[RMDB]
RNA sequence: GGGAACGACUCGAGUAGAGUCGAAAAUGCGUAUACGAAUAAAUCUAUGUAUCUGAGCCUAUCACGGAUUGGCCAAACGUGGACCAUGUACGUAACACAAAAAGACUUAAAGACGGGGAAAACGUACUGGGGACUGACGAAAACAUGGACCGACGUACAACGACUUCGGAUUCGUCCGAAGUCGUUGAAAAGAAACAACAACAACAAC
Reactivity to 2A3 in 0.01 (KOAc 150mM, MgCl2 10mM, bicine 150mM(pH8.5), 24C), signal-to-noise 2, nucleotides 027 to 156: u150g020c040g020u080a100u000a100c050g080a170a020u160a170a120a040u120c060u110a040u040g040u070a100u000c070u020g040a010g020c000c030u090a060u100c010a010c300g120g000a040u040u070g010g060c010c000a120a020a020c020g000u030g000g000a010c020c010a010u050g000u010a000c010g030u060a060a000c030a000c060a190a000a000a000a140g140a040c070u160u190a120a050a010g000a000c070g020g020g010g030a000a050a000a110c010g010u010a030c000u080g000g000g000g050a050c060u050g020a030c010g010a000a000a120a120c000a000u010g000g000a030c000c000g040a050c040g050u100a010
This 207-nucleotide RNA was probed chemically with 2A3. The data come from the RNA Mapping Database (RMDB), library OK3TST. The 2A3 profile rests on 732 reads. The reactions ran in a buffer of 150 mM KOAc, 10 mM MgCl2 and 150 mM bicine (pH 8.5), at 24 C.